[RMDB]
Overview:
Chemical mapping of a 177-nucleotide RNA with 2A3 and DMS. DMS adducts were read by reverse transcription with MarathonRT. The DMS profile rests on 1,875 reads. Values cover nucleotides 27 to 126. The data come from the RNA Mapping Database (RMDB), library RFMREP. For 2A3 the reverse transcriptase was SuperScript II with manganese.
RNA sequence: GGGAACGACUCGAGUAGAGUCGAAAAUUAGUACGAGAGGACCGGGUCUGACGCACCACUGGUGCAUCGGUUGUACUGUCAAGUGCAUGGCCGAGUAGCUAAGUGCGGACGGGAUAAGCGCUGAAAGCACUGGUAUGCAGUUCGCUGCAUACCAGUGAAAAGAAACAACAACAACAAC
Reactivity to 2A3 in 0.01 (KOAc 150mM, MgCl2 10mM, bicine 150mM(pH8.5), 24C), signal-to-noise 1, nucleotides 027 to 126: u080u020a040g080u070a000c060g020a010g000a110g060g040a040c020c080g020g000g030u080c040u040g040a020c020g000c000a000c020c020a070c100u110g010g000u100g000c250a020u000c000g030g000u000u040g000u040a010c000u030g250u300c130a130a010g010u020g010c010a030u040g060g000c000c000g000a010g020u010a010g000c000u060a300a000g010u000g020c040g000g020a030c040g010g020g020a040u070a070a020g000c000g000c020u050g050a120a020a000g040
Reactivity to DMS in 0.01 (KOAc 150mM, MgCl2 10mM, bicine 150mM(pH8.5), 24C), signal-to-noise 3, nucleotides 027 to 126: u000u000a110g020u000a090c060g010a110g000a150g010g010a110c080c030g030g010g020u010c070u030g010a170c010g000c040a020c010c020a110c090u010g020g010u000g010c140a170u000c000g020g000u010u010g010u000a020c010u000g000u030c290a070a040g030u000g020c020a040u010g030g000c020c000g010a020g000u000a300g000c030u000a030a080g010u000g000c020g020g010a120c110g010g000g000a070u010a070a090g000c070g020c050u000g020a060a070a100g010